RNA sequence: GGGAACGACUCGAGUAGAGUCGAAAAAGCUACACGACAUUUUCCAAGAACACCCCGACCUCGAAAUCAAGUACCUUAACAUGAUGAAAAUGGCCAUCACGGGCAAAGAAUCCAUCUGCCUGCCCUUUAACUUUCACUCCCACCGGCAACACACGUGUACGUUUAAGAACUUCGGUUCUUAAACGUAAAAAGAAACAACAACAACAAC
Reactivity to DMS in 0.01 (KOAc 150mM, MgCl2 10mM, bicine 150mM(pH8.5), 24C), signal-to-noise 2, nucleotides 027 to 156: a140g000c020u000a080c060a210c010g020a100c010a150u000u000u000u000c030c040a080a130g010a100a120c020a050c020c000c000c020g000a090c030c040u000c030g020a090a050a050u000c070a040a120g010u010a040c050c010u010u000a060a080c090a110u010g010a070u010g000a060a060a060a090u000g010g030c010c020a040u010c050a100c090g010g030g000c050a010a060a070g000a090a080u000c110c030a050u000c030u000g020c020c040u000g000c010c000c020u000u000u000a040a030c050u000u020u000c070a040c040u000c030c010c020a140c060c040g000g040c000a030a040c060a050c030a030c040g020u000g020
Reactivity to 2A3 in 0.01 (KOAc 150mM, MgCl2 10mM, bicine 150mM(pH8.5), 24C), signal-to-noise 3, nucleotides 027 to 156: a010g070c050u070a020c040a030c050g070a030c050a070u140u180u050u040c030c020a050a040g060a140a020c010a100c010c010c020c010g020a020c030c000u040c030g040a060a050a050u060c020a040a040g020u030a050c000c010u040u040a090a030c030a070u110g010a030u050g050a070a090a030a030u090g020g010c030c030a050u040c020a020c140g010g000g030c050a130a130a010g020a030a060u100c060c010a050u040c050u030g010c020c040u010g010c010c000c000u050u120u020a060a020c010u050u110u080c050a040c070u030c010c030c000a060c020c020g030g010c000a050a010c030a030c000a010c080g030u040g090